Structure probing data (DMS and 2A3) for a 177-nucleotide construct.
RNA sequence: GGGAACGACUCGAGUAGAGUCGAAAACUUGAGUAUGGAACGAUCGCCCACGUAGAAGGAGGUUGCGAUGGAUUGCCCUGUUAGCUGUCUCUAAGGGUAGGGGGCGCGUUAAGAGUAUCCCCAUAGGAUAAAUAUAAUUAUUCGUAAUUAUAUUUAUAAAAGAAACAACAACAACAAC
Reactivity to DMS in 0.01 (KOAc 150mM, MgCl2 10mM, bicine 150mM(pH8.5), 24C), signal-to-noise 2, nucleotides 027 to 126: c010u010u000g000a120g020u000a120u010g010g000a030a040c010g000a070u010c030g000c000c010c010a060c060g000u010a090g000a130a180g010g000a070g000g000u010u020g000c000g020a070u020g000g020a180u010u020g000c090c060c020u010g000u020u020a160g010c040u020g020u010c020u000c020u010a050a080g000g000g020u050a100g010g010g000g000g020c040g000c030g040u000u020a040a240g010a060g000u000a060u020c010c000c000c080a130u020a080g000g010
Reactivity to 2A3 in 0.01 (KOAc 150mM, MgCl2 10mM, bicine 150mM(pH8.5), 24C), signal-to-noise 1, nucleotides 027 to 126: c070u120u060g010a040g110u240a130u250g100g000a080a000c000g010a080u090c040g020c020c000c000a040c000g060u100a000g070a190a020g040g060a000g020g000u090u160g020c020g040a060u050g000g000a080u120u120g070c000c000c010u000g020u050u030a060g030c010u010g070u020c000u000c000u040a120a140g130g000g020u000a020g000g090g040g020g000c000g000c080g000u000u120a070a010g000a000g050u000a050u100c000c030c000c020a080u230a020g010g000

The data come from the RNA Mapping Database (RMDB), library OK1LIB.
The RNA was probed in 150 mM KOAc, 10 mM MgCl2 and 150 mM bicine (pH 8.5) at 24 C.